[RMDB]
Conditions: 150 mM KOAc, 10 mM MgCl2 and 150 mM bicine (pH 8.5), 24 C. Structure probing data (DMS) for a 177-nucleotide construct.

RNA sequence: GGGAACGACUCGAGUAGAGUCGAAAAAGGCUACGACUGGACGCUCGUGCCCAUGCCGGUGCGCGUGAACGGCUCGGGGAAGAGCAAGCCGCACGUGAAGAGGCCAAUGAACGCGUUUAUGGUGUGGCCGGGGAGAAACAUUCGUGUUUCUCCCCGGAAAAGAAACAACAACAACAAC
Reactivity to DMS in 0.01 (KOAc 150mM, MgCl2 10mM, bicine 150mM(pH8.5), 24C), signal-to-noise 1, nucleotides 027 to 126: a100g000g030c000u010a020c020g000a010c050u000g000g000a070c090g020c040u000c130g010u000g000c070c030c050a060u000g010c030c020g000g030u000g010c020g030c040g010u000g020a080a090c080g050g020c000u000c040g010g000g020g010a130a130g020a150g000c040a100a120g010c000c000g020c010a020c030g000u000g020a080a060g000a280g020g000c010c120a090a140u000g000a090a050c080g000c040g000u000u000u010a060u000g030g000u000g010u010g000g000